[RMDB]
RNA sequence: GGGAACGACUCGAGUAGAGUCGAAAAAUCGAGUAUGUCUGCGAUCCGCGGAUCGCGCAGUAUUACGUAGAUGCGUGAGUCGUCGGGCUUGGUCAUGCGCGUAAGGUAAUCGUAGAGGCGAGUGCGUGAGAUGACGUUGUCCUUGACCUGCGGACAACUGAGCUUUCUUAUUCGUAAGAAAGCUCAGAAAAGAAACAACAACAACAAC
Reactivity to DMS in 0.01 (KOAc 150mM, MgCl2 10mM, bicine 150mM(pH8.5), 24C), signal-to-noise 1, nucleotides 027 to 156: a140u020c030g000a070g030u000a040u010g010u020c010u000g010c010g010a030u000c000c080g080c090g030g000a020u000c050g000c020g000c000a050g040u010a060u000u000a070c130g050u000a130g050a070u000g010c020g050u000g000a050g000u000c000g000u020c130g100g000g040c010u000u010g020g020u000c000a060u000g020c050g000c020g000u000a070a090g030g000u000a050a100u000c050g010u010a080g020a180g050g000c050g020a110g030u010g010c000g010u000g030a100g000a110u000g000a110c020g020u000u000g020u000c010c060u000u000g010a130c030c000u010g010c120g020g010a060c060a090a140
Reactivity to 2A3 in 0.01 (KOAc 150mM, MgCl2 10mM, bicine 150mM(pH8.5), 24C), signal-to-noise 3, nucleotides 027 to 156: a000u080c060g000a000g030u070a040u120g050u020c060u050g040c030g080a140u050c020c000g000c110g060g010a040u020c020g000c000g000c010a000g060u110a050u150u150a070c180g060u100a040g040a130u070g020c010g000u010g000a040g040u080c040g020u050c010g010g010g040c020u010u020g070g010u050c010a020u090g050c010g000c020g040u020a070a060g080g070u060a070a040u100c050g010u030a050g040a040g140g050c030g000a010g000u050g000c030g010u030g060a100g020a050u060g010a010c170g080u030u050g000u020c000c000u020u100g020a050c000c030u020g020c000g010g000a010c010a040a020